Source: RMDB library 15KREP, as collected in RNAgym.
Structure probing data (2A3 and DMS) for a 177-nucleotide construct.
Reactivities are given for positions 27 through 126.
The RNA was probed in 150 mM KOAc, 10 mM MgCl2 and 150 mM bicine (pH 8.5) at 24 C.
The DMS profile rests on 11,754 reads.
[RMDB]
RNA sequence: GGGAACGACUCGAGUAGAGUCGAAAAGGUACGUUCUCUCAAAUUGAGUGAUAAUAAUUGUUAUCUUAAUGCAGUUAUUAUGACACUUGAUUUAUUGAAGGACAUUAAAUUUGUUAUACCUGCUCUACAUUACUUAUUCGUUCGCGAAUAAGUAAUGAAAAGAAACAACAACAACAAC
Reactivity to 2A3 in 0.01 (KOAc 150mM, MgCl2 10mM, bicine 150mM(pH8.5), 24C), signal-to-noise 7, nucleotides 027 to 126: g010g000u030a030c070g020u010u000c010u000c000u000c030a010a000a000u010u020g000a010g010u000g010a010u000a010a000u000a010a010u000u000g010u030u120a130u120c090u100u280a120a070u170g000c000a000g010u000u000a000u010u010a010u040g100a050c000a000c010u000u000g000a010u000u010u080a160u050u110g040a070a010g030g000a010c010a020u060u200a060a130a160u150u150u130g070u110u080a070u020a070c000c000u010g020c000u010c010u020a030
Reactivity to DMS in 0.01 (KOAc 150mM, MgCl2 10mM, bicine 150mM(pH8.5), 24C), signal-to-noise 7, nucleotides 027 to 126: g010g010u000a050c230g000u000u010c000u000c050u000c130a020a010a010u000u000g000a010g020u000g010a070u000a010a000u000a000a010u000u000g000u000u010a100u010c300u020u010a090a100u010g010c000a010g010u000u000a010u000u000a010u000g000a230c010a010c000u000u000g000a010u000u000u000a090u020u000g000a070a030g000g000a010c010a090u000u010a050a070a150u010u010u000g010u010u010a200u000a040c010c010u000g000c050u000c020u000a210